[RMDB]
RNA sequence: GGGAACGACUCGAGUAGAGUCGAAAACGGGAACGCUGAGGAUGCGCUGCGGGCGGCGACCAUGACCACAGCGCGGGCGGUGUACGUGAUCGGCGAGGUCGCCAAGGCGCUCGACUAUGCGCACCAACCUAAUCAGCGAUUUCGAUCGCUGAUUAGGAAAAGAAACAACAACAACAAC
Reactivity to 2A3 in 0.01 (KOAc 150mM, MgCl2 10mM, bicine 150mM(pH8.5), 24C), signal-to-noise 3, nucleotides 027 to 126: c020g010g020g080a040a030c030g040c120u130g050a080g090g060a160u080g010c010g020c020u020g010c000g040g030g020c040g020g000c000g000a030c000c000a050u130g100a140c000c000a000c050a080g030c050g030c000g030g000g000c080g020g120u090g050u090a060c030g000u040g030a100u090c040g000g000c020g020a030g010g000u010c000g000c010c000a010a050g210g010c120g000c000u000c010g080a080c070u100a060u280g000c000g000c000a000c000c010a010a040
Reactivity to DMS in 0.01 (KOAc 150mM, MgCl2 10mM, bicine 150mM(pH8.5), 24C), signal-to-noise 2, nucleotides 027 to 126: c070g010g000g030a080a070c080g020c080u000g000a180g020g010a110u000g020c050g040c010u000g000c030g010g000g020c050g000g000c020g010a070c030c020a100u020g010a110c060c000a060c090a090g020c030g020c040g010g000g000c120g000g010u000g000u000a070c100g000u010g000a110u010c080g020g010c050g020a130g020g000u000c020g020c020c040a110a110g030g030c200g030c020u000c030g000a110c140u000a030u010g000c000g020c050a090c020c020a120a200